Structure probing data (DMS and 2A3) for a 207-nucleotide construct. For DMS, 4,077 sequencing reads were counted.

[RMDB]
RNA sequence: GGGAACGACUCGAGUAGAGUCGAAAAGCGAUUUUCGAAUCGCCAUCUUCCUAAGUCUAGAACGAAUAUGCUUUGUCAGCUGCCCAUCGGAAACGAUGGUCAGCUUGGAUUUAAGCAUACUAUUCUAGAUAUGGACGUAAUUAAGGUUCGCCUUAAACUUGAGAAAAACUUUCGAGUUUUUCUCAAGAAAAGAAACAACAACAACAAC
Reactivity to DMS in 0.01 (KOAc 150mM, MgCl2 10mM, bicine 150mM(pH8.5), 24C), signal-to-noise 2, nucleotides 027 to 156: g000c000g010a040u000u000u010u010c210g000a040a030u000c000g000c010c050a150u010c080u000u010c000c000u000a070a240g000u000c000u020a000g010a030a000c050g020a050a030u000a010u010g010c000u000u000u000g020u010c020a050g010c010u010g000c150c020c000a020u010c000g010g000a160a130a250c000g030a000u000g030g010u000c000a020g010c010u000u000g040g020a020u010u000u000a010a020g000c000a030u000a000c030u000a120u010u000c010u000a000g010a020u000a300u010g000g020a040c070g020u020a090a110u010u000a040a050g010g050u010u000c120g020c010c000u000u000a050a120a170
Reactivity to 2A3 in 0.01 (KOAc 150mM, MgCl2 10mM, bicine 150mM(pH8.5), 24C), signal-to-noise 4, nucleotides 027 to 156: g000c000g000a000u040u030u080u200c200g090a050a010u010c010g000c000c020a140u030c040u070u040c000c000u040a160a040g010u000c000u000a000g010a030a020c060g030a300a240u000a020u010g010c000u000u010u020g010u020c010a010g000c000u000g000c030c000c000a000u000c010g040g000a100a030a040c010g000a000u010g000g000u000c000a010g000c000u010u030g010g000a000u210u280u190a000a000g000c000a000u000a000c010u020a020u000u000c000u000a000g000a000u020a040u040g030g020a010c050g070u120a130a160u090u070a080a040g060g000u050u150c200g130c090c000u080u090a130a170a110